An RNA of 155 nucleotides, treated with 2A3 and DMS and read out base by base. For 2A3 the reverse transcriptase was SuperScript II with manganese.
RNA sequence: GGGAACGACUCGAGUAGAGUCGAAAAAUAAAUUAGGCGGGUCAGCGUCACCAGCCCGCCGGUGAACGCAGGAUAACCGUCACUGUCGGCGGGCAAAAGGUACGAGAGUACCAAAAACUAGAUCUUCGGAUCUAGAAAAGAAACAACAACAACAAC
Reactivity to 2A3 in 0.01 (KOAc 150mM, MgCl2 10mM, bicine 150mM(pH8.5), 24C), signal-to-noise 3, nucleotides 027 to 135: a010u120a010a040a050u190u080a060g000g000c000g010g000g050u060c020a010g000c010g010u000c000a020c000c000a010g000c000c000c000g000c000c000g000g010u000g000a050a010c000g000c030a010g020g100a030u050a110a060c010c000g020u010c030a000c120u080g060u110c030g000g000c000g010g000g020c020a010a050a010a010g010g010u000a010c000g010a010g010a010g160u010a000c010c000a010a020a020a010a030c000u000a000g000a000u010c000u010u040c130g090g000a000u000c000u000a000g000a030
Reactivity to DMS in 0.01 (KOAc 150mM, MgCl2 10mM, bicine 150mM(pH8.5), 24C), signal-to-noise 3, nucleotides 027 to 135: a090u040a060a080a100u020u030a060g010g000c000g000g000g020u020c060a080g010c000g000u000c010a020c000c010a120g000c000c010c000g000c000c010g000g000u000g010a040a010c010g020c010a090g000g020a100u020a100a070c010c010g010u000c010a100c110u020g010u010c110g000g020c000g000g000g030c030a050a020a060a030g000g010u000a000c000g000a170g000a190g000u000a000c000c010a020a030a020a070a090c030u000a010g000a010u010c000u000u040c140g010g000a010u000c000u000a000g010a060